[RMDB]
RNA sequence: GGGAACGACUCGAGUAGAGUCGAAAAACGCGGCCUGGGUCUGAGGGUAACAUGGCCCUGCGGGAGAGAGCCAACACGGGGGGGCCCCGGUCCGGCUAACAGGGCAGGAGGUCGGCCCCAAUUGCCUCCUGACUGUAUCGUUCGCGAUACAGUCAGGAAAAGAAACAACAACAACAAC
Reactivity to 2A3 in 0.01 (KOAc 150mM, MgCl2 10mM, bicine 150mM(pH8.5), 24C), signal-to-noise 2, nucleotides 027 to 126: a000c090g010c040g010g050c000c010u100g030g000g000u000c040u060g060a070g060g080g000u070a040a020c030a130u110g080g000c000c000c010u030g030c120g010g070g010a030g020a000g010a020g050c010c030a100a060c130a060c050g000g000g000g010g000g060g020c050c000c000c000g020g000u000c010c000g030g000c020u080a110a050c030a060g010g040g000c010a010g000g050a090g060g000u030c030g110g130c000c000c000c000a000a040u020u100g030c000c000u010